[RMDB]
RNA sequence: GGGAACGACUCGAGUAGAGUCGAAAACGUGCUUGGCGGGAACGCCCAAAACGUCCUGGAGACGGGUGAGUGUCGGCGAGGACGUUUCGUUGCUUCCAGCUCCGGGGCCUACGGGGCGCGGCCCGACGGGCUUAUAUCCCUUCGGGGAUAUAAGCCCAAAAGAAACAACAACAACAAC
Reactivity to DMS in 0.01 (KOAc 150mM, MgCl2 10mM, bicine 150mM(pH8.5), 24C), signal-to-noise 1, nucleotides 027 to 126: c170g000u000g000c150u000u070g000g010c010g000g100g000a300a060c020g000c000c000c030a010a000a110a270c300g020u000c000c000u000g110g000a000g000a040c010g000g000g000u040g000a000g000u040g010u230c090g000g000c000g000a110g000g000a210c010g000u000u000u000c040g000u000u020g000c000u000u000c000c060a150g000c000u000c030c000g000g010g000g000c020c060u000a300c300g000g000g000g000c000g000c260g040g000c030c000c000g000a060c000
Reactivity to 2A3 in 0.01 (KOAc 150mM, MgCl2 10mM, bicine 150mM(pH8.5), 24C), signal-to-noise 3, nucleotides 027 to 126: c060g040u050g050c080u110u170g170g010c040g000g000g010a040a010c010g020c030c000c010a010a090a030a000c020g010u020c000c010u000g030g000a010g000a150c040g000g100g040u220g040a070g000u080g170u220c030g000g020c010g010a090g100g110a190c070g020u050u140u000c010g010u020u090g030c010u060u040c010c030a020g020c010u010c000c000g000g000g010g000c020c000u090a090c050g010g000g000g000c010g000c030g100g030c000c000c020g030a030c020

An RNA of 177 nucleotides, treated with DMS and 2A3 and read out base by base. For 2A3 the reverse transcriptase was SuperScript II with manganese. The DMS profile rests on 844 reads. For 2A3, 1,704 sequencing reads were counted.